[RMDB]
RNA sequence: GGGAACGACUCGAGUAGAGUCGAAAAACGAGGAUGCCUUGGCCGCUCAGGCACGCCCACAGACUGCUUUGGGUGCGCAUGUGCCGAAGCACAAGAUGUGGCUCAAGCGCUGCCAGCGCGACUCUCAACAACUUCGGGAGUUCGCUCCCGAAGUUGUAAAAGAAACAACAACAACAAC
Reactivity to DMS in 0.01 (KOAc 150mM, MgCl2 10mM, bicine 150mM(pH8.5), 24C), signal-to-noise 1, nucleotides 027 to 126: a150c150g030a120g000g000a090u000g030c010c020u010u020g010g010c050c060g000c030u000c050a170g010g000c110a060c010g010c060c000c020a010c040a030g000a280c300u000g000c000u000u000u000g000g060g060u000g000c060g010c250a210u030g010u000g000c000c030g010a030a100g010c000a040c020a060a090g010a040u000g010u030g030g000c140u000c080a130a020g060c110g010c100u000g010c040c090a090g000c050g000c000g000a090c080u000c060u000c060a140
Reactivity to 2A3 in 0.01 (KOAc 150mM, MgCl2 10mM, bicine 150mM(pH8.5), 24C), signal-to-noise 1, nucleotides 027 to 126: a000c110g000a050g130g000a080u150g020c000c000u000u020g050g000c020c010g090c050u100c090a050g050g080c040a030c040g050c010c030c020a020c000a020g190a200c070u220g100c030u130u120u110g230g040g000u070g000c050g040c090a170u200g000u000g080c000c050g050a030a010g000c010a050c020a100a020g050a140u130g060u030g020g000c040u060c160a110a040g000c070g020c100u030g040c010c030a010g000c010g020c020g100a020c000u000c060u020c000a030